RNA sequence: GGGAACGACUCGAGUAGAGUCGAAAAAGGGUCAGGCGGUAGCCUGUCACGAUGCGGAUCCUGGUCGUUGACAACUACGACAGCUUCGUGUUCAACCUGGUGCAGUACCUCGGCCAGCUCGGCAUCGCCAACGAAAGCGAUUCGUCGCUUUCGUUGGAAAAGAAACAACAACAACAAC
Reactivity to DMS in 0.01 (KOAc 150mM, MgCl2 10mM, bicine 150mM(pH8.5), 24C), signal-to-noise 3, nucleotides 027 to 126: a060g000g000g000u020c000a020g000g010c030g010g010u060a130g050c000c000u010g040u000c040a270c030g010a000u030g000c000g000g020a000u000c220c000u000g020g000u000c000g000u000u000g000a160c160a110a030c020u000a030c010g000a090c020a050g000c140u030u020c120g020u010g000u000u020c140a130a150c240c050u020g010g020u030g000c030a070g010u000a060c020c020u010c020g010g000c000c010a010g020c300u000c040g020g020c050a030u010c030g000
Reactivity to 2A3 in 0.01 (KOAc 150mM, MgCl2 10mM, bicine 150mM(pH8.5), 24C), signal-to-noise 6, nucleotides 027 to 126: a010g150g000g010u050c010a010g020g000c020g140g170u140a040g010c010c010u000g000u010c000a010c010g000a000u020g010c020g100g010a040u070c040c000u000g000g010u000c000g020u020u020g060a140c100a160a010c120u090a020c040g110a030c030a020g030c060u150u150c090g110u140g100u190u170c060a060a070c010c010u060g040g050u070g000c030a020g010u050a160c000c000u020c010g000g000c020c000a010g000c010u020c020g120g000c000a020u000c020g040

The record gives the reactivity of an RNA of 177 nucleotides to DMS and 2A3. For 2A3 the reverse transcriptase was SuperScript II with manganese. The DMS profile rests on 3,765 reads. It was measured as part of the RMDB library OK1LIB. The reactions ran in a buffer of 150 mM KOAc, 10 mM MgCl2 and 150 mM bicine (pH 8.5), at 24 C.